[RMDB]
RNA sequence: GGGAACGACUCGAGUAGAGUCGAAAAGAACCAACGCAGAACGACAAGGCUGAGUUGAUUGUUAAACUCGCUCAGGCUGCACAAAGCGCGGCAAAUGCUGGUGUCGGUCAAAUCCUUACAGAUGAUGAAAUCAGGGGAUUCCUUGGUCUUGAGCCUAACGCCUUACAGAAUUCGUUCUGUAAGGCGUAAAAGAAACAACAACAACAAC
Reactivity to DMS in 0.01 (KOAc 150mM, MgCl2 10mM, bicine 150mM(pH8.5), 24C), signal-to-noise 2, nucleotides 027 to 156: g020a090a150c000c020a030a060c040g010c050a100g010a020a170c080g040a120c090a060a090g000g030c020u000g000a040g010u000u010g020a050u000u010g010u000u020a120a130a050c140u010c000g010c000u010c010a070g040g030c010u000g000c020a090c040a110a160a170g010c080g000c030g010g010c080a060a070a140u020g000c020u000g000g050u000g020u000c040g020g000u000c080a070a080a070u000c000c000u000u020a270c110a110g010a080u000g000a190u040g000a050a060a180u000c030a270g010g010g000g000a070u000u000c020c070u020u020g000g030u000c000u000u040g000a120g010c020c000u010a090
Overview
Structure probing data (DMS) for a 207-nucleotide construct. DMS adducts were read by reverse transcription with MarathonRT. The DMS profile rests on 2,590 reads. The reactions ran in a buffer of 150 mM KOAc, 10 mM MgCl2 and 150 mM bicine (pH 8.5), at 24 C. Reactivities are given for positions 27 through 156.